[RMDB]
RNA sequence: GGGAACGACUCGAGUAGAGUCGAAAACAGAGCUAAUGAGCCACAUACCUACCCAAGGUGAAACCUCCUUCUCUCGCAAUGUGUAACUCAUGAUUCUCAUGACCCCUGGUUGGAGAGAUCCGGACUAUAGACUAGAGGGUGUUCGCACCCUCUAGAACCUAAGUGAACAGUUCGCUGUUCACUUAGGAAAAGAAACAACAACAACAAC
Reactivity to 2A3 in 0.01 (KOAc 150mM, MgCl2 10mM, bicine 150mM(pH8.5), 24C), signal-to-noise 5, nucleotides 027 to 156: c060a030g060a020g030c030u090a150a090u120g070a030g030c060c020a070c020a080u200a050c010c010u040a080c020c010c040a050a020g030g000u050g040a100a040a050c010c010u040c010c020u040u020c030u010c010u010c010g070c110a020a060u060g050u010g030u110a070a020c010u010c020a030u020g040a110u300u030c110u020c040a040u080g060a120c000c020c000c030u080g070g000u050u060g030g010a020g000a000g000a050u030c050c020g030g010a010c020u060a040u100a260g090a080c000u000a000g010a000g000g000g000u010g010u000u010c090g030c050a000c020c000c010u010c000u010a000g000a000a000
Reactivity to DMS in 0.01 (KOAc 150mM, MgCl2 10mM, bicine 150mM(pH8.5), 24C), signal-to-noise 2, nucleotides 027 to 156: c070a100g030a110g010c060u000a110a040u000g020a100g000c030c000a030c040a090u000a070c040c010u000a090c010c040c030a120a080g000g000u000g010a090a090a130c070c040u000c010c010u000u000c040u010c020u000c020g040c050a100a050u000g030u000g020u010a040a040c020u000c000a030u000g000a170u010u000c060u000c010a090u010g000a130c030c000c010c010u000g020g020u000u000g010g010a070g040a120g000a090u000c020c010g000g020a080c060u000a120u010a140g010a160c010u000a010g020a070g000g000g030u000g050u000u000c250g060c040a040c000c000c000u000c000u000a000g000a050a080
About this RNA:
This 207-nucleotide RNA was probed chemically with 2A3 and DMS. It was measured as part of the RMDB library M2RFPK. Values cover nucleotides 27 to 156. For 2A3 the reverse transcriptase was SuperScript II with manganese. Conditions: 150 mM KOAc, 10 mM MgCl2 and 150 mM bicine (pH 8.5), 24 C.